[RMDB]
The record gives the reactivity of an RNA of 207 nucleotides to 2A3 and DMS. Values are in units of 0.01, from 0 to 300, in steps of 10. Reactivities are given for positions 27 through 156. It was measured as part of the RMDB library OK3TST. 2A3 adducts were read by reverse transcription with SuperScript II with manganese. Conditions: 150 mM KOAc, 10 mM MgCl2 and 150 mM bicine (pH 8.5), 24 C.

RNA sequence: GGGAACGACUCGAGUAGAGUCGAAAAGACCGGUACGGACCCGUGUGCGGUAGGCACGCGUGCGAGUGAGCGUAAACAGUUCCGUGAGCGGAACAGUCUGAUAACCAAGUACGUGAACAGGUCCAUCAGCAUCCUGUCGUGUGUCACCUUGCGGUAGGACAUAAUCGGUUUUCGAACCGAUUAUGUCAAAAGAAACAACAACAACAAC
Reactivity to 2A3 in 0.01 (KOAc 150mM, MgCl2 10mM, bicine 150mM(pH8.5), 24C), signal-to-noise 3, nucleotides 027 to 156: g050a020c020c000g000g030u160a070c070g010g060a030c040c010c000g030u030g020u010g040c060g000g130u120a080g160g000c020a010c020g010c010g030u090g060c050g030a040g010u140g050a040g030c050g030u070a070a060a010c010a050g010u000u000c000c000g030u070g110a050g070c030g010g000a010a000c000a000g030u020c040u040g060a120u060a110a030c030c010a040a060g050u040a020c050g030u060g030a080a030c020a030g010g020u000c050c000a050u070c030a010g020c030a060u050c000c010u060g010u060c020g030u020g000u010g040u090c000a020c020c020u040u110g010c020g000g030u060a060g050
Reactivity to DMS in 0.01 (KOAc 150mM, MgCl2 10mM, bicine 150mM(pH8.5), 24C), signal-to-noise 1, nucleotides 027 to 156: g020a110c070c030g040g030u040a040c030g030g000a050c030c000c000g020u000g020u010g030c010g000g000u010a070g050g030c030a100c030g030c000g050u000g040c100g010a170g030u010g020a030g000c010g040u000a080a050a090c010a200g000u000u000c010c020g000u020g000a250g000c140g000g010a020a020c000a090g000u000c000u040g000a110u000a100a070c090c060a020a150g020u000a080c040g000u000g000a060a100c070a040g000g000u000c050c060a030u010c050a120g020c060a130u000c020c010u000g030u000c020g000u000g060u000g010u000c000a060c060c020u000u000g040c000g000g010u000a110g020